[RMDB]
RNA sequence: GGGAACGACUCGAGUAGAGUCGAAAAUUGGACGGCGGCCAUGAGUCGCAACGCAAAGCCGCGGCAAGUGGAGUUAGCGAGAAGAGACUAGGCUUUGGUUUCUUCAAGUGAAGCGGUCACCAAUCAGAAUAGCUUGCGCAGUUCGCUGCGCAAGCAACGUUCCUAAUACUUUCGAGUAUUAGGAACGAAAAGAAACAACAACAACAAC
Reactivity to 2A3 in 0.01 (KOAc 150mM, MgCl2 10mM, bicine 150mM(pH8.5), 24C), signal-to-noise 2, nucleotides 027 to 156: u050u000g060g020a020c050g090g010c000g030g030c020c000a110u120g010a030g050u000c010g010c010a070a070c040g010c120a120a100a030g020c070c020g010c030g010g000c040a020a060g020u060g060g060a120g110u140u150a030g010c010g010a010g010a030a000g000a000g000a000c000u030a020g140g170c050u110u140u170g040g000u000u000u010c000u000u000c020a000a020g010u030g070a080a010g060c000g020g000u030c020a030c050c020a010a050u100c010a000g190a240a150u160a030g020c000u000u010g000c010g000c000a010g010u050u160c180g090c140u010g000c000g010c000a000a000g000c000a010a010